RNA sequence: GGGAACGACUCGAGUAGAGUCGAAAAAGGCUAAUAAGUCUGUUGGUAUUAUAUCUAUGCCUUUGGGAUAUGUGUCUCAUGGUUUAGACUUAAUGCAAGCAGGGAGUGUCGUGCGUAGAGUUAACGUUAGGGUCCCUGUUCGCAGGGACCAAAAGAAACAACAACAACAAC
Reactivity to 2A3 in 0.01 (KOAc 150mM, MgCl2 10mM, bicine 150mM(pH8.5), 24C), signal-to-noise 4, nucleotides 027 to 129: a000g080g020c030u080a070a030u120a300a070g050u050c010u020g020u020u050g100g000u020a000u020u040a010u000a040u030c000u000a000u020g010c000c000u040u030u040g060g000g000a030u090a110u300g300u120g030u060c030u000c010a000u000g000g020u000u000u010a000g010a000c000u010u030a030a030u040g000c020a020a000g000c010a000g010g070g030a110g000u060g020u070c020g000u020g080c050g000u000a040g000a000g080u060u060a070a020c080g010u010u070a100g070
Reactivity to DMS in 0.01 (KOAc 150mM, MgCl2 10mM, bicine 150mM(pH8.5), 24C), signal-to-noise 3, nucleotides 027 to 129: a040g030g000c010u020a030a030u030a110a050g010u000c010u010g020u010u010g020g020u020a050u000u000a030u020a000u010c000u020a030u020g010c040c020u030u030u060g020g050g030a040u020a020u050g050u120g000u000c030u010c010a030u040g000g040u060u000u020a030g020a030c100u010u000a020a040u010g020c010a000a040g000c020a060g040g020g010a070g040u020g020u000c050g020u020g030c140g060u000a090g000a140g010u010u020a120a080c110g000u000u090a120g030

Structure probing data (2A3 and DMS) for a 170-nucleotide construct. The data come from the RNA Mapping Database (RMDB), library 15KLIB. The reactions ran in a buffer of 150 mM KOAc, 10 mM MgCl2 and 150 mM bicine (pH 8.5), at 24 C. The 2A3 profile rests on 4,411 reads.